[RMDB]
RNA sequence: GGGAACGACUCGAGUAGAGUCGAAAAAUGCAGGUAGUGUGUAUCAUGCGAAUCGUUCUGCGAUUCGUAACUGCAGGUUGCUCCGGUUGAUCGAUAGAUUGUAAGGUUUGUCGGUCGUUUUAAUCGUGCGCCAAAUAUUAUUCGUAAUAUUUGGCGCAAAAGAAACAACAACAACAAC
Reactivity to DMS in 0.01 (KOAc 150mM, MgCl2 10mM, bicine 150mM(pH8.5), 24C), signal-to-noise 2, nucleotides 027 to 126: a040u030g020c030a000g000g040u000a070g000u020g000u020g020u020a130u020c070a120u020g010c020g010a000a000u000c000g000u000u040c220u040g030c000g020a040u000u000c000g000u000a040a060c040u000g000c020a000g020g000u010u000g030c020u010c010c060g030g000u000u000g000a000u000c000g020a020u010a030g010a020u000u000g000u060a100a160g000g030u000u000u000g010u000c000g070g000u000c000g020u010u010u000u000a050a130u000c130g040u000
Reactivity to 2A3 in 0.01 (KOAc 150mM, MgCl2 10mM, bicine 150mM(pH8.5), 24C), signal-to-noise 3, nucleotides 027 to 126: a000u030g000c000a000g010g090u210a140g020u120g030u010g010u300a090u230c080a030u160g000c000g000a000a030u000c000g040u080u090c080u300g050c000g000a000u000u000c020g000u000a010a010c020u020g000c000a000g020g090u110u040g060c080u000c000c010g020g030u050u210g000a000u000c000g020a000u000a000g060a010u000u100g130u230a260a060g070g040u030u000u020g000u000c000g020g000u030c020g000u000u010u090u180a100a140u120c040g040u030

Overview
Source: RMDB libraries RFM100 and RFMREP, as collected in RNAgym. An RNA of 177 nucleotides, treated with DMS and 2A3 and read out base by base. The RNA was probed in 150 mM KOAc, 10 mM MgCl2 and 150 mM bicine (pH 8.5) at 24 C. Reactivities are rounded to 0.1 and cut off at 0 and 3.